[RMDB]
Chemical mapping of a 177-nucleotide RNA with DMS. The reactions ran in a buffer of 150 mM KOAc, 10 mM MgCl2 and 150 mM bicine (pH 8.5), at 24 C. The data come from the RNA Mapping Database (RMDB), library M2PK50. For DMS the reverse transcriptase was MarathonRT.
RNA sequence: GGGAACGACUCGAGUAGAGUCGAAAAACUGCCUGUUUCGACAGGCAGUAGUCUACUUCGCGCAUCCGCCGAGUCGUUCCCGCGGUUGCGUGAAGUAGUUUGAUAUGAUCUUAUUCGUAAGAUCAAAUUAUGCGGUAGCAUUCGUGCUACCGCAUAAAAAAGAAACAACAACAACAAC
Reactivity to DMS in 0.01 (KOAc 150mM, MgCl2 10mM, bicine 150mM(pH8.5), 24C), signal-to-noise 2, nucleotides 027 to 126: a020c000u000g000c000c000u010g010u000u000u030c170g010a060c000a020g020g010c000a000g010u000a030g000u030c000u000a000c020u000u000c010g010c000g020c010a010u000c020c010g040c030c280g000a230g010u000c010g010u000u000c000c000c000g020c000g010g000u010u000g000c000g020u000g000a000a010g010u000a000g010u000u010u000g010a170u010a150u010g010a010u000c000u000u000a020u010u000c210g020u000a010a000g010a010u000c010a060a070a110